[RMDB]
RNA sequence: GGGAACGACUCGAGUAGAGUCGAAAAUAGAAAUAGUGGAGGGAUAGGCAUACAAAACAAGGACAAUAUCAGGCUGCCCUAGGGCUGUGUCAAAAGCUCUAAGGAAGCAUGGAAGGGGAGUGUCUGACUUCCUGGGUUGAGGGUGGGGGAUGUAUGACUAUGAGUGAUUAUUCGUAAUCACUCAUAGAAAAGAAACAACAACAACAAC
Reactivity to 2A3 in 0.01 (KOAc 150mM, MgCl2 10mM, bicine 150mM(pH8.5), 24C), signal-to-noise 2, nucleotides 027 to 156: u100a020g140a020a060a060u140a070g050u070g080g060a070g030g050g030a080u090a110g010g000c000a000u030a080c010a090a100a010a010c070a020a040g070g030a010c060a090a090u070a030u200c010a040g060g010c000u030g010c010c000c000u000a020g030g000g000c000u000g040u060g120u300c020a020a090a020a000g000c010u000c000u000a020a000g000g010a030a000g000c010a010u070g050g010a040a060g000g000g010g000a010g000u010g050u040c030u000g070a120c020u090u100c010c010u010g090g000g050u050u190g050a120g020g040g080u150g070g000g000g000g000a000u130g050u010a030u010g010a020